The data come from the RNA Mapping Database (RMDB), library OK2TST. Chemical mapping of a 177-nucleotide RNA with 2A3 and DMS. Reactivities are rounded to 0.1 and cut off at 0 and 3. The DMS profile rests on 766 reads. For DMS the reverse transcriptase was MarathonRT. The RNA was probed in 150 mM KOAc, 10 mM MgCl2 and 150 mM bicine (pH 8.5) at 24 C.
RNA sequence: GGGAACGACUCGAGUAGAGUCGAAAAGGACCAUCUGGUCGGCAUGGCGCGGAUCGACGCCGAGGUUCAUCGCGAUUUCAACGGUUUCGUCGAACUUGGCGACGGCACGUUCCUUCACGAGACCGAAGGGUGCGAUACCCUUCGGGGUAUCGCACCCAAAAGAAACAACAACAACAAC
Reactivity to 2A3 in 0.01 (KOAc 150mM, MgCl2 10mM, bicine 150mM(pH8.5), 24C), signal-to-noise 1, nucleotides 027 to 126: g070g030a080c020c010a000u110c110u200g010g030u010c000g030g040c090a060u090g070g000c050g050c020g040g020a020u030c000g000a000c000g030c020c000g000a020g020g030u000u060c010a020u080c070g020c050g100a110u010u130u140c150a240a130c050g020g050u010u010u010c040g060u030c070g000a010a010c010u010u000g030g000c010g000a020c020g030g010c040a020c020g010u040u040c030c030u000u050c030a030c030g100a090g000a010c020c020g020a060a010
Reactivity to DMS in 0.01 (KOAc 150mM, MgCl2 10mM, bicine 150mM(pH8.5), 24C), signal-to-noise 1, nucleotides 027 to 126: g010g000a150c020c010a160u030c130u010g060g000u000c000g010g040c070a090u010g010g060c110g000c070g020g000a160u000c050g010a170c050g000c020c030g030a070g000g020u000u000c070a060u000c030g010c090g000a030u000u010u000c240a040a070c120g000g000u000u000u000c000g000u000c110g000a060a040c020u000u000g000g000c000g010a070c080g000g000c300a030c040g000u000u000c010c020u000u000c060a030c120g020a140g000a090c020c020g030a060a060